Chemical mapping of a 207-nucleotide RNA with DMS and 2A3. 2A3 adducts were read by reverse transcription with SuperScript II with manganese. The RNA was probed in 150 mM KOAc, 10 mM MgCl2 and 150 mM bicine (pH 8.5) at 24 C.
[RMDB]
RNA sequence: GGGAACGACUCGAGUAGAGUCGAAAAGAGAUGUUCUCGAAGAUGGAGAGCGCGACGACAAGGUCUUGGAAGUCGACAUGCCUCGGUUCGAAGAGGACCACCUUGUCAGGACGCAGGUCCACCACCGCACGGUACCAGCGCCCGUUGAGCGUGGAGGGCAUUAGUCAUAAUUCGUUAUGACUAAUGCAAAAGAAACAACAACAACAAC
Reactivity to DMS in 0.01 (KOAc 150mM, MgCl2 10mM, bicine 150mM(pH8.5), 24C), signal-to-noise 3, nucleotides 027 to 156: g030a090g000a080u010g010u000u000c000u000c020g010a120a100g010a080u000g010g010a070g010a230g000c020g020c030g030a250c070g000a030c000a020a030g010g000u000c020u000u000g040g010a070a090g030u010c100g000a140c090a120u000g010c040c020u010c030g020g010u000u000c030g000a200a210g010a190g000g010a170c040c040a060c010c010u000u000g000u010c020a080g000g010a090c010g010c030a050g000g000u020c010c030a060c020c010a070c040c060g000c040a200c060g000g000u000a070c000c000a170g010c060g000c010c010c030g030u000u020g000a080g010c080g020u010g020g010a200g000g020
Reactivity to 2A3 in 0.01 (KOAc 150mM, MgCl2 10mM, bicine 150mM(pH8.5), 24C), signal-to-noise 4, nucleotides 027 to 156: g110a000g000a040u120g020u060u030c030u010c050g040a070a030g080a090u110g010g000a020g000a010g010c020g000c010g040a120c050g000a000c010a000a000g010g000u030c070u120u100g070g010a110a040g070u100c050g060a060c050a070u190g040c000c010u030c030g020g030u110u160c130g060a100a040g020a030g050g010a010c020c000a010c000c000u010u010g020u020c040a020g000g020a020c010g020c030a010g020g090u000c020c020a010c000c010a020c010c050g040c040a030c050g020g010u070a110c000c040a060g030c050g010c070c010c000g030u020u130g080a020g030c050g000u040g000g050a090g050g030